[RMDB]
RNA sequence: GGGAACGACUCGAGUAGAGUCGAAAACCUCAGGAAGACGCCGAGUGAAGCGAUCUGGACUCCGGCGUUACUCGUAUGGGCUCCCGAUUUUCGAGAAGAAAAGUCCGAAGGAGUUGGCGAGAAGAUCGCUUCGAAUAUACUUCGGUAUAUUCGAAGCAAAAGAAACAACAACAACAAC
Reactivity to 2A3 in 0.01 (KOAc 150mM, MgCl2 10mM, bicine 150mM(pH8.5), 24C), signal-to-noise 1, nucleotides 027 to 126: c000c000u040c010a090g090g180a120a080g040a050c000g010c040c020g040a040g050u020g050a020a020g160c000g080a080u000c050u050g070g160a040c050u090c130c070g000g020c010g000u000u020a000c000u000c000g020u080a160u250g140g050g120c000u080c030c020c010g000a000u040u000u040u030c110g000a130g060a300a060g080a000a070a010a010g130u040c080c090g070a190a100g020g080a040g000u090u150g130g010c010g010a010g040a090a040g000a050u060c020
Reactivity to DMS in 0.01 (KOAc 150mM, MgCl2 10mM, bicine 150mM(pH8.5), 24C), signal-to-noise 1, nucleotides 027 to 126: c060c010u010c220a170g010g000a180a170g030a040c010g010c040c000g010a050g010u000g000a150a090g000c030g000a040u000c000u010g000g000a090c040u020c060c090g010g000c010g000u000u000a040c010u000c030g010u000a210u010g010g010g020c010u000c000c000c010g000a090u000u000u000u000c020g000a190g000a140a200g000a020a000a010a020g000u000c050c140g020a120a120g020g000a000g000u010u000g020g020c010g000a010g040a200a060g000a010u000c030